[RMDB]
RNA sequence: GGGAACGACUCGAGUAGAGUCGAAAAUGGGUGAUCGAGCGUGUCACCGAGACGCGGACACUCUUCUUCGCCGACGGCACCCCGCGGCGGAUCGAGUUCUCCCUCGAGCUCAAGCGCAUCGACGACGGCCGCACCGAUCUGCUCGGUUCGGUCCUCGCCCUAGGGCCUAUUUCGAUAGGCCCUAGGGAAAAGAAACAACAACAACAAC
Reactivity to 2A3 in 0.01 (KOAc 150mM, MgCl2 10mM, bicine 150mM(pH8.5), 24C), signal-to-noise 1, nucleotides 027 to 156: u150g020g020g000u040g000a200u000c080g010a040g070c000g020u010g060u080c040a080c120c040g000a030g000a000c080g000c050g030g000a000c030a000c100u010c000u070u020c030u040u020c000g000c000c010g160a300c000g020g020c170a160c050c110c000c000g080c000g020g000c100g010g000a020u040c050g000a000g020u030u050c020u040c030c010c000u030c030g020a060g060c030u040c070a010a040g010c000g040c080a300u040c070g060a010c020g000a000c000g040g010c010c000g020c020a050c040c000g020a020u020c030u090g030c020u050c000g020g010u010u010c000g010g020u040c000c000u010c030g050

Structure probing data (2A3) for a 207-nucleotide construct. For 2A3 the reverse transcriptase was SuperScript II with manganese. The 2A3 profile rests on 739 reads. Reactivities are rounded to 0.1 and cut off at 0 and 3. Values cover nucleotides 27 to 156. The reactions ran in a buffer of 150 mM KOAc, 10 mM MgCl2 and 150 mM bicine (pH 8.5), at 24 C.